[RMDB]
RNA sequence: GGGAACGACUCGAGUAGAGUCGAAAAACCAUAGCCAUGGGGAGAGAUGCUAGGAGUGGGGAGCGACCGGAACGAGGAGAAAAGUAAAGAAAGCAACGGGGCUAGCGAGUGGAUGUUCCGCCUCCCCGUACAGGGAGGCGUUCGCGCCUCCCUGUACAAAAGAAACAACAACAACAAC
Reactivity to DMS in 0.01 (KOAc 150mM, MgCl2 10mM, bicine 150mM(pH8.5), 24C), signal-to-noise 1, nucleotides 027 to 126: a140c020c030a110u010a100g010c040c090a050u010g010g020g010g000a070g010a030g010a050u000g020c090u000a050g020g000a160g030u020g000g000g000g000a020g000c070g000a100c150c020g000g000a050a030c050g000a150g000g000a090g000a120a070a040a040g010u000a080a030a120g010a100a070a120g040c080a080a050c110g010g000g010g010c020u000a080g000c050g020a100g030u030g010g000a110u000g020u000u010c010c000g030c040c020u000c010c000c000c050